[RMDB]
RNA sequence: GGGAACGACUCGAGUAGAGUCGAAAAUUCGCUGAAUUAUGAUUGCGUGGCACGCUCGGUCAAGCUCGUGUGGUAUCACACACAUGGCGCCAGGUCACACCAAAAGCUCCUCCGUCACCUCCACAUCCGUCAAUGUAUCGUUCGCGAUACAUUGACGAAAAGAAACAACAACAACAAC
Reactivity to 2A3 in 0.01 (KOAc 150mM, MgCl2 10mM, bicine 150mM(pH8.5), 24C), signal-to-noise 1, nucleotides 027 to 126: u040u040c050g040c110u090g120a150a090u130u070a120u180g130a060u190u000g090c050g020u050g000g000c050a000c110g030c030u020c000g010g010u090c050a060a060g030c050u020c050g030u030g000u020g070g000u120a080u300c060a040c000a000c000a000c000a110u080g010g000c040g010c000c000a010g020g020u110c040a030c000a020c030c000a110a070a000a040g000c000u060c020c000u000c010c030g060u050c040a030c000c010u000c000c010a090c010a070u100c060
Reactivity to DMS in 0.01 (KOAc 150mM, MgCl2 10mM, bicine 150mM(pH8.5), 24C), signal-to-noise 1, nucleotides 027 to 126: u020u010c040g000c050u000g010a030a050u000u000a090u030g000a150u020u000g030c040g080u000g000g010c020a090c080g010c000u000c060g020g000u000c070a070a140g000c040u010c090g020u000g000u050g000g000u000a090u010c130a110c170a030c070a080c050a030u030g000g010c050g000c010c010a070g010g040u010c120a110c040a180c060c130a040a010a110a050g010c100u000c030c000u020c030c050g010u000c020a070c030c010u000c010c020a070c190a110u010c070